[RMDB]
RNA sequence: GGGAACGACUCGAGUAGAGUCGAAAAUUAGCCCAGACUUAUGAGAGAAUAAAGACCUCUCAGCCCCUCCACCUUGGAGUGCCCUAUUCGGAGACUGCAGUUCCCCAUAGAAAGGCUAAGCACCUCGCUAUCUUAUUUGGUUCGCCAAAUAAGAUAGAAAAGAAACAACAACAACAAC
Reactivity to 2A3 in 0.01 (KOAc 150mM, MgCl2 10mM, bicine 150mM(pH8.5), 24C), signal-to-noise 3, nucleotides 027 to 126: u050u000a000g040c000c000c000a030g070a080c050u140u180a080u170g000a020g000a000g000a050a090u120a160a210a030g100a080c000c010u020c000u000c020a020g070c000c000c000c000u010c010c010a050c010c000u030u110g040g020a020g030u060g030c000c000c030u050a110u040u110c050g080g000a050g010a070c030u050g010c070a000g010u030u020c020c000c000c000a010u040a010g050a060a060a000g000g000c010u020a070a030g060c000a030c000c010u010c010g010
Reactivity to DMS in 0.01 (KOAc 150mM, MgCl2 10mM, bicine 150mM(pH8.5), 24C), signal-to-noise 5, nucleotides 027 to 126: u000u010a100g010c010c010c020a130g000a160c170u010u000a070u000g010a030g010a020g020a070a050u000a060a130a160g010a230c180c000u000c000u000c000a060g010c040c020c010c000u000c020c040a080c150c060u000u000g020g000a070g000u000g010c020c020c010u010a120u010u000c060g010g000a090g010a060c060u000g000c070a110g000u000u010c020c010c010c120a100u020a070g010a090a080a090g000g010c020u000a060a070g000c100a090c040c020u000c140g010